[RMDB]
RNA sequence: GGGAACGACUCGAGUAGAGUCGAAAAGAAAGAAAAUCGGACAACCAAACCGAAGAAUGCCGUGUAAGGUUGUAACGGCAUAAACGUCUCGAAAGAGUAAAAGAAGCUCAAAACGAGACCAAAGAAAAGUAUAAUGGCCUUUCGAGGCCAUUAUACUAAAAGAAACAACAACAACAAC
Reactivity to 2A3 in 0.01 (KOAc 150mM, MgCl2 10mM, bicine 150mM(pH8.5), 24C), signal-to-noise 1, nucleotides 027 to 126: g010a020a090a010g060a090a060a010a110u070c000g030g000a000c050a050a010c100c010a100a080a000c000c000g000a000a000g020a080a040u000g000c000c000g020u000g000u020a110a170g010g030u020u000g000u000a000a000c000g000g000c000a000u030a000a130a000c070g010u010c000u010c000g000a040a110a170g020a000g000u010a020a220a220a100g080a090a010g000c000u000c000a000a090a000a000c000g000a000g000a050c000c000a000a120a020g120a010a120a000
Reactivity to DMS in 0.01 (KOAc 150mM, MgCl2 10mM, bicine 150mM(pH8.5), 24C), signal-to-noise 3, nucleotides 027 to 126: g010a090a220a180g000a070a050a070a060u020c000g000g000a030c120a050a280c030c010a070a130a130c010c010g000a070a110g010a090a080u000g000c010c000g010u000g000u020a130a060g000g020u010u000g010u000a060a010c000g000g000c000a020u010a020a090a230c300g000u000c000u000c030g000a080a090a300g010a020g070u040a020a100a210a070g030a150a280g000c000u020c010a020a060a070a130c030g000a000g050a020c000c300a000a060a140g000a040a180a020